[RMDB]
RNA sequence: GGGAACGACUCGAGUAGAGUCGAAAAGAUAUGGAGGUCAGUGGCAACAGCGUCUACUCGGAAACGAGUAUGACGACAUGCCACGACCUCCUAAGUCAAAAGCGUAUGGAGUUCGCUCCAUACGCAACGGGCAUAACACGUUCGCGUGUUAUGCCCGAAAAGAAACAACAACAACAAC
Reactivity to 2A3 in 0.01 (KOAc 150mM, MgCl2 10mM, bicine 150mM(pH8.5), 24C), signal-to-noise 1, nucleotides 027 to 126: g040a040u000a000u090g000g000a010g000g060u090c200a240g070u250g020g000c130a300a080c200a300g050c040g000u000c000u010a000c010u040c010g000g000a000a020a000c000g020a010g020u010a010u250g000a030c020g000a010c000a050u160g030c000c000a010c010g010a000c000c000u010c000c000u000a000a000g000u020c000a070a020a050a090g000c060g000u010a000u020g020g010a010g000u000u240c300g060c180u070c000c000a000u000a000c000g030c000a000a000

Source information: The data come from the RNA Mapping Database (RMDB), library TTRDES. Chemical mapping of a 177-nucleotide RNA with 2A3. For 2A3, 1,698 sequencing reads were counted. 2A3 adducts were read by reverse transcription with SuperScript II with manganese. Conditions: 150 mM KOAc, 10 mM MgCl2 and 150 mM bicine (pH 8.5), 24 C. Reactivities are given for positions 27 through 126.